[RMDB]
RNA sequence: GGGAACGACUCGAGUAGAGUCGAAAAGGGGUCAUCGAGGAAGGAGGUUAGGCUUUUGACGAGCUGAAGCCUCCACGGCUCGAUAAGCCUAACUCCCCACCCUUCCCGAUGACGGAGGCACCCAAAAGAAGAUCAACCGUUCGCGGUUGAUCUUCAACCCUCUUAGUUAGUUCGCUAACUAAGAGGGAAAAGAAACAACAACAACAAC
Reactivity to DMS in 0.01 (KOAc 150mM, MgCl2 10mM, bicine 150mM(pH8.5), 24C), signal-to-noise 1, nucleotides 027 to 156: g030g040g070g030u010c000a030u000c000g010a210g020g000a110a020g040g000a280g020g000u000u040a140g000g030c010u000u020u000u000g010a250c240g020a010g030c010u020g040a080a100g030c090c010u000c020c020a130c060g010g000c000u020c040g040a140u000a000a090g020c040c030u030a020a040c010u020c170c110c170c100a300c120c030c010u000u000c020c000c000g010a000u000g000a120c040g020g000a050g080g020c020a140c020c010c010a120a090a140a160g000a010a040g030a000u000c000a010a010c000c000g000u000u030c300g050c000g040g000u000u000g000a000u000c000u000u030c030a090a140
Reactivity to 2A3 in 0.01 (KOAc 150mM, MgCl2 10mM, bicine 150mM(pH8.5), 24C), signal-to-noise 3, nucleotides 027 to 156: g080g000g010g020u010c010a000u010c010g070a250g010g010a010a000g000g020a020g000g030u010u010a000g020g000c020u130u180u130u240g170a110c060g010a010g000c020u010g030a090a030g020c010c020u040c010c020a000c010g000g010c010u000c000g070a110u080a200a020g000c010c000u000a000a000c010u010c020c020c000c000a040c000c000c000u000u000c000c000c000g000a000u000g000a010c050g000g000a010g000g000c010a040c000c010c000a050a090a010a030g010a000a000g000a000u010c000a000a000c010c000g070u110u130c280g010c000g130g000u000u000g000a000u000c000u000u000c000a000a000
The record gives the reactivity of an RNA of 207 nucleotides to DMS and 2A3.
The RNA was probed in 150 mM KOAc, 10 mM MgCl2 and 150 mM bicine (pH 8.5) at 24 C.
Values cover nucleotides 27 to 156.